RNA sequence: GGGAACGACUCGAGUAGAGUCGAAAAGAUAUGGAAUCGUAAGACGCUUGGAUUUAUGGGAAGUCAUAACUGUGUCGGAAACGACACAGUUAUGUCGCCCAUUGUCAGCGUUAUCGAUUCCUAAGUCGCAAAAAUACAAGUUCGCUUGUAUUUUUGCAAAAGAAACAACAACAACAAC
Reactivity to DMS in 0.01 (KOAc 150mM, MgCl2 10mM, bicine 150mM(pH8.5), 24C), signal-to-noise 2, nucleotides 027 to 126: g010a100u020a300u010g010g020a000a010u000c010g000u010a120a300g000a020c000g040c010u000u010g000g020a030u010u000u000a010u010g010g010g000a190a090g010u010c000a010u000a020a000c010u000g020u010g000u000c030g030g000a140a060a260c010g000a020c000a000c010a000g000u000u000a000u010g000u010c030g020c010c000c000a000u000u000g000u000c010a030g020c000g030u000u000a190u000c000g000a030u000u000c000c000u000a020a100g020u000c080
Reactivity to 2A3 in 0.01 (KOAc 150mM, MgCl2 10mM, bicine 150mM(pH8.5), 24C), signal-to-noise 3, nucleotides 027 to 126: g060a030u200a100u260g000g020a020a000u020c020g020u120a260a190g070a040c010g030c090u200u300g300g010a150u300u300u120a000u070g000g050g000a300a300g080u030c000a000u000a000a010c000u000g010u000g020u000c000g010g020a040a090a050c010g000a010c010a000c000a000g000u000u000a000u000g000u000c000g010c000c000c000a000u010u030g000u000c010a000g000c000g000u000u010a020u050c000g010a010u000u000c000c000u010a090a020g160u070c080

The record gives the reactivity of an RNA of 177 nucleotides to DMS and 2A3.
The 2A3 profile rests on 4,237 reads.
The DMS profile rests on 1,800 reads.